[RMDB]
RNA sequence: GGGAACGACUCGAGUAGAGUCGAAAAUGUGUAUCUUAUCACCUGCCAAUGUGACAGCAGAAGGUGGAUCGUCUAAACUUUCCCUUAAAUCAGUCAUAUUUUGGGACAAAGCUAACAAUCAAACCUGUCGGGAAAGUGAUUUCGAUCACUUUCCCGAAAAAGAAACAACAACAACAAC
Reactivity to DMS in 0.01 (KOAc 150mM, MgCl2 10mM, bicine 150mM(pH8.5), 24C), signal-to-noise 1, nucleotides 027 to 126: u000g020u010g020u000a000u000c050u020u020a130u010c060a020c060c080u000g020c120c140a210a130u000g010u000g010a000c070a110g050c100a060g010a090a020g020g020u000g040g010a060u000c150g000u010c230u010a040a110a140c090u000u000u000c000c000c000u010u020a030a070a070u000c060a120g040u000c190a060u000a150u000u000u000u000g000g000g000a090c220a060a000a020g070c100u000a080a050c050a100a040u010c050a050a050a180c140c000u000g020

Structure probing data (DMS) for a 177-nucleotide construct.
The data come from the RNA Mapping Database (RMDB), library OK2TRN.
Conditions: 150 mM KOAc, 10 mM MgCl2 and 150 mM bicine (pH 8.5), 24 C.
Reactivities are given for positions 27 through 126.